[RMDB]
RNA sequence: GGGAACGACUCGAGUAGAGUCGAAAAAGGUCAGGGGCGGGUUGCCACCGCCUGCCAAGGCGUACAGACCAGCGGUCACGGCGAGCGCGGCGAUUCCACCUAUAGAAAUCAAUUUCGGCAUGUUAUGGAUACUAAUGCCAUUCGUGGCAUUAGUAUCAAAAGAAACAACAACAACAAC
Reactivity to 2A3 in 0.01 (KOAc 150mM, MgCl2 10mM, bicine 150mM(pH8.5), 24C), signal-to-noise 9, nucleotides 027 to 126: a000g070g030u080c060a030g030g010g000g000c060g000g030g000u020u050g010c000c000a040c010c000g000c000c000u000g000c010c010a030a030g050g000c040g050u150a070c130a060g070a170c010c010a030g030c030g040g030u110c060a030c100g030g020c020g020a120g060c120g000c040g050g000c020g010a010u170u050c020c010a040c010c010u060a080u070a160g130a030a070a040u110c070a050a070u050u090u090c020g020g020c040a040u060g060u120u170a130u170g120
Reactivity to DMS in 0.01 (KOAc 150mM, MgCl2 10mM, bicine 150mM(pH8.5), 24C), signal-to-noise 4, nucleotides 027 to 126: a070g000g010u010c060a120g010g010g000g020c100g000g000g000u020u030g000c010c020a080c090c020g000c000c010u000g040c050c090a140a260g000g010c010g010u050a080c190a150g000a100c040c010a110g000c100g020g000u000c040a110c200g000g000c010g000a090g010c140g020c100g000g000c090g000a060u000u010c030c040a140c040c030u010a090u040a050g000a040a100a100u010c090a010a110u000u030u020c070g010g010c050a060u030g020u000u000a130u020g000